[RMDB]
RNA sequence: GGGAACGACUCGAGUAGAGUCGAAAAUAGACAUAUGCAGUUGAAGCAAAUAGCUCGGAAGCUACACUAAAUUGGUUUCCAUUCAGUGGAACUGAAUCGACAAAGCUUGUAAGAUUGGUAAUAAAUGCGGUACCUGCAGGUUCGCCUGCAGGUACCGAAAAGAAACAACAACAACAAC
Reactivity to 2A3 in 0.01 (KOAc 150mM, MgCl2 10mM, bicine 150mM(pH8.5), 24C), signal-to-noise 1, nucleotides 027 to 126: u150a000g010a030c000a170u110a000u150g060c060a080g100u060u190g100a100a000g000c000a000a000a300u300a100g000c000u030c180g080g000a000a000g000c000u000a100c170a150c120u170a080a000a270u140u070g000g000u000u010u000c000c000a000u000u030c000a000g080u110g090g040a120a120c000u000g000a030a030u080c000g000a040c150a000a300a000g000c000u060u000g000u000a000a000g000a060u070u200g290g060u000a150a150u000a300a030a100u250g000
The data come from the RNA Mapping Database (RMDB), library OK1LIB. Structure probing data (2A3) for a 177-nucleotide construct. The 2A3 profile rests on 263 reads.